[RMDB]
RNA sequence: GGGAACGACUCGAGUAGAGUCGAAAAGAAAGAAAGAAAUUAGCUCGCCAGUUAGCGAGGUCUGUCCCCACAUGACAGAUAAUCGGGUGCAACUCCCGCCCCUUUUCCGAGGGUCAUCGGAACCAAAAAAACUCAGGCAACUUCGGUUGCCUGAGAAGCGUAGCAUUAUGUUCGCAUAAUGCUACGCAAAAGAAACAACAACAACAAC
Reactivity to 2A3 in 0.01 (KOAc 150mM, MgCl2 10mM, bicine 150mM(pH8.5), 24C), signal-to-noise 2, nucleotides 027 to 156: g080a030a030a020g090a040a060a040g040a040a170a040u150u110a120g040c010u000c010g000c030c030a190g140u190u140a010g030c000g000a000g000g030u000c000u000g000u000c030c030c100c010a090c010a070u100g000a000c000a000g010a030u020a060a030u080c000g000g000g000u010g000c010a010a000c030u000c020c000c000g020c000c000c000c000u110u140u050u030c000c000g000a000g020g010g000u070c040a000u000c000g000g020a010a000c080c030a030a070a030a030a000a020a110c000u000c010a010g000g000c000a000a000c020u040u090c100g130g000u000u000g000c000c000u000g000a010g000a000a000